[RMDB]
This 207-nucleotide RNA was probed chemically with 2A3 and DMS. Reactivities are given for positions 27 through 156. For 2A3, 4,909 sequencing reads were counted. High DMS reactivity at an A or C suggests that its Watson-Crick edge is free. Source: RMDB library OK3TST, as collected in RNAgym. For DMS, 6,021 sequencing reads were counted.
RNA sequence: GGGAACGACUCGAGUAGAGUCGAAAACGGUAGUCAACCAGCACGGUGCCGCGGUGCCGGCAGAGACGGAGCUUUUGCCGGCGGUCGCGGAUGCGUUCGAUAACGUCACGGCUCAUGCGGCCUCCUGAUGGCGGGCGCGGCGCUUCUCCAGCGCGCGCUACGCCGAAUGAUUCGUCAUUCGGCGUAGAAAAGAAACAACAACAACAAC
Reactivity to 2A3 in 0.01 (KOAc 150mM, MgCl2 10mM, bicine 150mM(pH8.5), 24C), signal-to-noise 5, nucleotides 027 to 156: c020g050g070u090a050g070u090c050a060a050c060c020a030g070c060a040c120g060g020u090g040c000c000g010c010g000g050u050g010c000c000g000g000c000a010g000a010g030a040c130g110g020a050g060c050u040u100u190u080g000c000c000g000g010c020g010g030u100c000g000c000g000g020a020u040g010c010g000u030u080c080g030a110u070a210a050c030g020u020c050a010c080g020g010c000u020c070a120u210g060c090g020g020c000c010u090c020c040u100g040a100u070g010g030c010g020g020g000c030g000c010g080g030c010g000c020u120u060c020u020c020c020a020g000c010g000c010g000c010g000
Reactivity to DMS in 0.01 (KOAc 150mM, MgCl2 10mM, bicine 150mM(pH8.5), 24C), signal-to-noise 2, nucleotides 027 to 156: c080g030g000u000a060g000u010c030a080a060c030c010a110g020c010a050c120g000g050u010g030c010c020g000c020g030g010u000g000c010c020g090g000c000a010g020a000g010a300c080g030g000a150g000c130u000u000u000u000g040c010c010g040g030c040g010g010u000c010g020c020g030g020a010u010g020c010g000u000u000c070g000a160u000a040a050c040g030u010c030a050c040g030g000c000u010c030a140u000g030c090g030g010c030c010u010c030c020u000g000a080u000g020g020c060g010g000g000c010g020c020g030g000c030g010c030u000u020c040u000c010c030a300g020c020g000c010g030c050g010